[RMDB]
RNA sequence: GGGAACGACUCGAGUAGAGUCGAAAAGCGGGGUUCGCCCCGCCACAAUCCUAAGUCAUGUUUGAGGGAAACAGUUAGAGCUAUAUCGGAAACGAUAUAGUAGUCUAACAGUUUCCCAAUGAUGACAUGAUAUGGAACUCAUGACGUUCGCGUCAAAGUACACUCCCAAAUUCGUUUGGGAGUGUACAAAAGAAACAACAACAACAAC
Reactivity to 2A3 in 0.01 (KOAc 150mM, MgCl2 10mM, bicine 150mM(pH8.5), 24C), signal-to-noise 2, nucleotides 027 to 156: g030c010g000g000g000g000u040u130c190g190c010c000c010c000g010c010c010a040c020a030a140u030c010c000u050a130a050g000u000c000a000u010g030u010u000u030g020a010g000g000g010a010a010a010c030a060g000u000u000a010g000a000g000c000u000a000u000a000u010c000g030g040a160a030a050c010g000a000u000a000u000a000g000u060a020g030u000c000u000a000a000c000a000g010u010u000u010c000c000c000a000a000u010g000a000u000g000a000c000a000u020g000a000u020a080u070g000g010a080a070c080u080c210a200u120g010a010c010g050u110u080c300g040c020g100u040c060a060a030a000
Reactivity to DMS in 0.01 (KOAc 150mM, MgCl2 10mM, bicine 150mM(pH8.5), 24C), signal-to-noise 1, nucleotides 027 to 156: g080c000g050g030g030g090u000u000c160g030c000c030c000c000g040c020c050a000c090a100a170u010c020c020u000a090a300g000u000c000a010u000g000u000u000u000g000a130g070g030g000a000a010a010c010a140g030u000u000a000g030a090g010c000u000a010u000a000u030c020g020g030a170a150a210c000g000a000u000a000u000a000g030u000a060g050u000c010u000a010a000c000a110g020u000u000u000c000c000c000a010a020u000g030a090u010g000a000c000a010u000g020a020u010a300u000g010g010a050a110c040u030c080a180u030g020a020c020g010u000u000c170g020c110g000u020c000a050a080a300